Structure probing data (DMS and 2A3) for a 177-nucleotide construct. For 2A3, 750 sequencing reads were counted. Values cover nucleotides 27 to 126. The data come from the RNA Mapping Database (RMDB), library OK1LIB. DMS adducts were read by reverse transcription with MarathonRT.

RNA sequence: GGGAACGACUCGAGUAGAGUCGAAAAGAAGAGAGUCGACGCAAGCGACGAUAACUGCGGAACGGUAACCGUAGUACCGUAGGGUCAUGGCACGCGAAAGCGAAAGACCGAACCAUGCCAUAAGAGAACCUCAUCCCGGAUUCGUCCGGGAUGAGGUAAAAGAAACAACAACAACAAC
Reactivity to DMS in 0.01 (KOAc 150mM, MgCl2 10mM, bicine 150mM(pH8.5), 24C), signal-to-noise 1, nucleotides 027 to 126: g020a050a120g000a060g050a110g020u000c000g030a050c110g020c130a060a260g000c100g000a040c090g000a030u020a070a080c050u000g000c000g050g140a120a070c110g020g100u000a070a090c030c020g000u000a040g000u020a080c050c000g000u000a050g000g020g000u000c050a020u000g010g000c010a220c000g010c050g030a060a140a150g000c040g000a030a140a110g080a080c000c040g030a140a090c080c010a050u000g000c000c000a000u010a030a030g000a170g010a170
Reactivity to 2A3 in 0.01 (KOAc 150mM, MgCl2 10mM, bicine 150mM(pH8.5), 24C), signal-to-noise 2, nucleotides 027 to 126: g060a140a010g130a000g000a000g000u040c000g000a060c020g080c060a080a160g050c000g060a000c000g070a150u070a060a000c040u090g010c010g080g050a120a000c000g080g090u070a070a040c020c010g000u020a020g090u030a030c010c000g000u000a090g200g010g120u090c090a000u090g000g080c020a000c000g000c000g170a070a200a000g090c000g030a050a000a000g120a040c100c040g040a050a040c000c000a020u070g050c000c000a000u030a120a090g090a000g060a030